[RMDB]
An RNA of 177 nucleotides, treated with DMS and 2A3 and read out base by base. The reactions ran in a buffer of 150 mM KOAc, 10 mM MgCl2 and 150 mM bicine (pH 8.5), at 24 C.
RNA sequence: GGGAACGACUCGAGUAGAGUCGAAAACAGUGAUGGAAACAUCACUGAAAAACCGGAAACGGACAUGACGAUGGCGCGCAUGUCGGGAAACCGUAAACGCGAAAAGAGCUAGCGAAAGCUAGCUCAAAGCAUUAAUACGGUUCGCCGUAUUAAUGCUAAAAGAAACAACAACAACAAC
Reactivity to DMS in 0.01 (KOAc 150mM, MgCl2 10mM, bicine 150mM(pH8.5), 24C), signal-to-noise 4, nucleotides 027 to 126: c000a030g010u010g020a000u000g000g020a240a090a190c000a000u000c010a000c000u000g030a000a020a050a180a150c050c010g020g010a060a090a160c060g010g000a080c050a020u010g000a080c040g000a100u030g010g020c030g020c050g020c010a100u000g000u000c040g010g000g000a040a110a240c070c020g000u020a040a060a080c100g000c110g030a080a050a130a070g000a000g020c000u000a010g000c020g010a090a100a160g000c000u000a000g000c000u000c000a000a040
Reactivity to 2A3 in 0.01 (KOAc 150mM, MgCl2 10mM, bicine 150mM(pH8.5), 24C), signal-to-noise 5, nucleotides 027 to 126: c000a010g000u000g000a000u010g010g020a020a020a020c000a010u000c000a000c000u010g000a050a000a000a010a000c020c010g040g040a120a100a010c050g070g010a010c000a020u070g040a050c020g110a100u170g140g080c060g000c010g020c060a010u000g020u010c020g020g020g010a090a050a000c000c000g000u070a020a220a000c100g050c040g080a040a070a020a090g000a000g000c000u000a000g000c000g040a100a010a010g000c000u000a000g000c000u000c000a000a000